RNA sequence: GGGAACGACUCGAGUAGAGUCGAAAAGUGAAAUGCCUAUUAAAACAUUUCGUAAGGCCAGCAUGGCAGUGUGCAUCAGUAGUCCCAUCUAUUUGGGAGGAUGGCUUGAGGCCAGGAGUUAGAGAGAGUAGUGUGUUAUAAUCAUGCCUGUGAAUAAUCGUUUUAUACGGUUCGCCGUAUAAAACGAAAAAGAAACAACAACAACAAC
Reactivity to DMS in 0.01 (KOAc 150mM, MgCl2 10mM, bicine 150mM(pH8.5), 24C), signal-to-noise 1, nucleotides 027 to 156: g020u000g030a030a000a060u000g040c030c000u010a260u000u010a130a150a100a060c010a000u000u000u010c000g020u000a100a080g000g040c030c010a120g020c080a050u000g020g000c000a050g030u000g000u000g030c000a100u000c030a060g050u010a170g000u000c010c010c000a030u010c080u010a160u000u020u010g060g000g010a100g010g010a070u000g000g000c040u000u000g000a100g030g000c020c040a070g080g010a080g020u000u000a090g020a180g000a070g000a070g010u000a080g030u000g050u000g000u020u000a050u000a040a140u000c080a090u000g010c020c000u000g020u010g010a070a070u000a070a230
Reactivity to 2A3 in 0.01 (KOAc 150mM, MgCl2 10mM, bicine 150mM(pH8.5), 24C), signal-to-noise 2, nucleotides 027 to 156: g050u010g000a000a030a050u010g000c010c030u110a230u180u220a160a120a030a020c050a040u020u010u150c040g070u090a070a040g030g000c010c000a020g010c050a060u120g050g000c050a070g010u040g010u080g020c000a030u010c040a030g080u120a040g030u060c000c010c010a060u050c050u100a210u120u100u070g000g010g000a000g020g030a010u060g000g020c050u010u110g020a040g080g000c000c000a020g000g010a000g000u100u100a010g000a000g000a000g000a010g040u080a030g000u020g060u000g000u030u090a150u060a130a090u060c050a020u090g050c000c000u040g020u030g080a000a020u230a010a040